[RMDB]
RNA sequence: GGGAACGACUCGAGUAGAGUCGAAAAACUCACAAGGCCAGGUAGGAGGCACUUUCCUGAGCCCUGUCCAGGGCCCUCAGGGGGCAGGAUGGGGCCGAGGCCAGGUAGAAAGUGAGGCCCCACUGGGCUUUCAUGAGGUUUUCGAACCUCAUGAAAGAAAAGAAACAACAACAACAAC
Reactivity to 2A3 in 0.01 (KOAc 150mM, MgCl2 10mM, bicine 150mM(pH8.5), 24C), signal-to-noise 1, nucleotides 027 to 126: a000c000u020c000a020c000a040a040g100g020c000c000a020g050g050u100a070g050g080a050g040g030c090a040c070u070u050u030c000c010u010g040a030g030c020c000c000u000g020u000c000c000a100g130g250g000c020c000c030u040c070a130g150g010g040g090g000c020a010g000g020a000u000g010g010g000g000c000c000g010a010g040g000c000c010a000g060g020u130a040g110a100a130a000g000u010g050a030g020g020c000c000c000c000a020c040u070g030g090g030
Reactivity to DMS in 0.01 (KOAc 150mM, MgCl2 10mM, bicine 150mM(pH8.5), 24C), signal-to-noise 3, nucleotides 027 to 126: a120c020u010c020a070c110a100a160g000g010c000c010a050g020g040u000a060g020g020a130g020g010c080a050c090u000u000u000c000c000u000g010a170g000c010c000c000u010g020u000c020c020a140g000g020g020c020c000c000u010c210a140g010g020g000g010g010c010a060g000g000a020u010g010g000g020g020c000c030g000a060g020g010c070c030a050g010g000u010a080g010a060a060a090g010u000g010a060g020g020c040c000c010c060a130c090u000g000g010g010

Structure probing data (2A3 and DMS) for a 177-nucleotide construct.
It was measured as part of the RMDB library OK2TRN.
The DMS profile rests on 3,339 reads.
DMS adducts were read by reverse transcription with MarathonRT.
For 2A3 the reverse transcriptase was SuperScript II with manganese.
Reactivities are given for positions 27 through 126.